An RNA of 207 nucleotides, treated with DMS and 2A3 and read out base by base.
The RNA was probed in 150 mM KOAc, 10 mM MgCl2 and 150 mM bicine (pH 8.5) at 24 C.
The 2A3 profile rests on 8,815 reads.
For DMS the reverse transcriptase was MarathonRT.
The data come from the RNA Mapping Database (RMDB), library M2RFPK.
For 2A3 the reverse transcriptase was SuperScript II with manganese.

RNA sequence: GGGAACGACUCGAGUAGAGUCGAAAAGAUCGGAAACAGCAGCAGGUGAGUCCGCCUUAUGUGAAGGAUCGGCGGAAACACGAGGAAAUACUGAGCCAACGCAAGACGGUAGCCGAACAGUAGCAACAAAACGCUUACGUGUUCGCACGUAAGCGAACUCUAUUAAGGUGUUCGCACCUUAAUAGAGAAAAGAAACAACAACAACAAC
Reactivity to DMS in 0.01 (KOAc 150mM, MgCl2 10mM, bicine 150mM(pH8.5), 24C), signal-to-noise 3, nucleotides 027 to 156: g010a070u020c040g030g010a150a040a070c060a070g020c040a070g030c090a090g050g020u000g000a170g020u000c000c020g010c010c000u000u010a060u020g030u000g010a140a130g030g010a080u000c120g000g020c000g010g010a080a110a060c050a050c060g010a160g010g000a070a050a130u010a080c050u000g010a090g000c040c000a050a140c070g020c040a050a110g000a130c070g030g020u000a090g000c020c040g000a080a080c040a060g030u000a060g000c060a100a090c050a020a080a070a120c020g020c000u000u000a020c000g050u010g000u000u000c300g040c010a030c010g010u000a000a010g000c000g020a000a040
Reactivity to 2A3 in 0.01 (KOAc 150mM, MgCl2 10mM, bicine 150mM(pH8.5), 24C), signal-to-noise 7, nucleotides 027 to 156: g020a050u080c050g030g040a080a030a030c030a040g040c010a010g000c020a030g040g060u020g040a040g040u010c000c010g030c020c010u170u150a200u220g150u080g100a100a030g080g030a090u110c060g000g000c010g010g000a020a030a010c050a000c020g030a030g020g090a040a060a030u130a090c050u040g020a010g050c020c010a030a030c060g010c050a010a040g050a020c040g040g020u030a020g050c030c010g000a030a010c020a030g070u110a030g040c040a010a060c010a060a080a020a020c020g000c000u000u010a000c000g000u010g010u030u030c090g020c080a000c010g000u000a000a000g000c000g000a000a000